RNA sequence: GGGAACGACUCGAGUAGAGUCGAAAACAGAGCAGGUUUGGUAGGAGAGAUAGAUCUCCCCCUAGAGGGUACCACCAAUCCAAAUGGUUAUGCCAAUUGGGAUAUAGACAUAACUGGUUAUGCGCAAAUCAUUCACAACAUUCGUGUUGUGAAUGAUAAAAGAAACAACAACAACAAC
Reactivity to DMS in 0.01 (KOAc 150mM, MgCl2 10mM, bicine 150mM(pH8.5), 24C), signal-to-noise 5, nucleotides 027 to 126: c100a080g000a120g000c040a100g010g010u000u000u000g000g010u010a090g020g010a060g020a060g000a160u010a110g000a100u010c010u000c010c010c010c010c020u010a110g010a140g020g000g000u010a080c200c100a050c040c030a040a060u000c030c030a090a080a060u010g000g000u000u020a050u010g010c010c000a060a100u000u000g010g000g020a130u000a070u000a070g020a040c010a030u000a020a040c030u000g010g020u000u010a090u010g020c050g010c180a070a100
Reactivity to 2A3 in 0.01 (KOAc 150mM, MgCl2 10mM, bicine 150mM(pH8.5), 24C), signal-to-noise 5, nucleotides 027 to 126: c040a010g040a010g070c040a060g010g040u020u050u050g050g010u050a070g030g020a040g010a010g020a080u160a180g180a210u060c020u030c000c000c000c010c000u080a100g080a110g130g000g030u040a020c020c000a010c010c000a020a000u000c010c000a030a040a080u120g020g000u040u020a020u090g040c010c010a090a120u120u090g090g000g000a020u060a030u030a130g040a020c020a010u030a020a010c030u020g070g020u130u090a090u110g030c060g000c060a080a160
An RNA of 177 nucleotides, treated with DMS and 2A3 and read out base by base. The 2A3 profile rests on 5,949 reads. For DMS the reverse transcriptase was MarathonRT. Source: RMDB library OK2TST, as collected in RNAgym. High 2A3 reactivity points to a flexible backbone, as in loops and unpaired stretches.